[RMDB]
RNA sequence: GGGAACGACUCGAGUAGAGUCGAAAAUCAGGUCACUUCGGUGACCUGAAAACAAGGAACCAAAAGGAAAACCUAACCAAGGAAUAUGGAAACCUAAAUAAAAAACCAUAGCCUUCGGGCUAUGGAAUCCUAAACAGUAGUUCGCUACUGUUUAGGAAAAAGAAACAACAACAACAAC
Reactivity to DMS in 0.01 (KOAc 150mM, MgCl2 10mM, bicine 150mM(pH8.5), 24C), signal-to-noise 3, nucleotides 027 to 126: u000c000a000g000g020u000c000a000c010u000u020c240g030g030u000g000a000c000c000u000g000a010a030a090a110c210a120a070g000g000a230a170c020c020a070a050a150a140g000g010a120a060a160a080c010c040u000a080a130c080c100a140a040g010g010a070a060u000a060u000g000g000a100a120a100c010c050u000a060a040a140u030a020a060a050a120a080a170c010c000a000u000a000g000c000c000u000u000c130g050g000g000c000u000a000u000g000g000a020a010
Reactivity to 2A3 in 0.01 (KOAc 150mM, MgCl2 10mM, bicine 150mM(pH8.5), 24C), signal-to-noise 3, nucleotides 027 to 126: u010c000a000g000g030u000c010a000c020u030u080c190g120g000u000g000a000c000c010u010g000a000a000a000a000c040a030a050g030g030a020a040c050c000a050a130a010a120g060g030a050a080a080a060c000c000u040a030a020c010c030a040a070g080g050a220a080u130a040u260g020g010a140a050a010c010c020u120a130a160a040u150a030a150a080a030a020a000c010c000a010u010a000g000c010c000u020u030c300g150g000g000c010u000a000u010g000g000a010a010
Overview:
The data come from the RNA Mapping Database (RMDB), library M2PK50. Chemical mapping of a 177-nucleotide RNA with DMS and 2A3. For 2A3, 1,954 sequencing reads were counted. Values cover nucleotides 27 to 126. For DMS, 2,564 sequencing reads were counted. Conditions: 150 mM KOAc, 10 mM MgCl2 and 150 mM bicine (pH 8.5), 24 C. DMS adducts were read by reverse transcription with MarathonRT.